[RMDB]
RNA sequence: GGGAACGACUCGAGUAGAGUCGAAAAGGGGUCUAUAAAUCCAUACUUGGAUUUAGUUCUGAGGUAUGGCUGAAGCCUCCACGGCCAUACUACCCACCAGAACUUGUCAGUAUGGAUUUAUAGACGGAGGCACCCAAAAGGUACGUUCGCGUACCAAGACUGAUUACCAGUUCGCUGGUAAUCAGUCAAAAGAAACAACAACAACAAC
Reactivity to DMS in 0.01 (KOAc 150mM, MgCl2 10mM, bicine 150mM(pH8.5), 24C), signal-to-noise 1, nucleotides 027 to 156: g000g000g070g020u030c010u000a000u000a030a010a010u010c000c000a010u000a010c140u000u020g020g000a090u000u010u000a050g000u020u010c000u000g000a150g030g020u030a020u010g020g070c010u000g000a080a080g010c000c050u000c000c110a300c090g010g060c000c000a020u030a020c000u000a030c030c030c020a300c150c020a060g000a050a030c000u000u000g030u000c020a120g000u000a000u000g010g000a060u000u000u000a020u000a000g010a040c070g010g040a020g030g030c020a080c020c000c000a140a040a110a170g010g000u020a020c000g050u000u010c300g020c010g010u000a020c030c030a020a140
Reactivity to 2A3 in 0.01 (KOAc 150mM, MgCl2 10mM, bicine 150mM(pH8.5), 24C), signal-to-noise 3, nucleotides 027 to 156: g000g000g000g010u010c000u000a010u000a000a010a000u000c000c000a000u000a030c060u150u300g120g020a030u170u210u140a000g010u010u000c000u000g010a000g020g000u000a000u010g000g010c000u010g010a040a010g010c010c000u000c000c000a030c010g000g020c000c000a000u000a000c000u020a030c030c050c010a050c010c010a000g000a000a000c000u010u010g050u020c140a150g000u010a000u010g000g000a000u010u010u000a000u000a000g000a000c000g000g000a000g000g000c000a040c000c000c000a050a160a020a050g010g000u020a000c000g030u030u150c280g000c000g150u000a000c000c000a000a020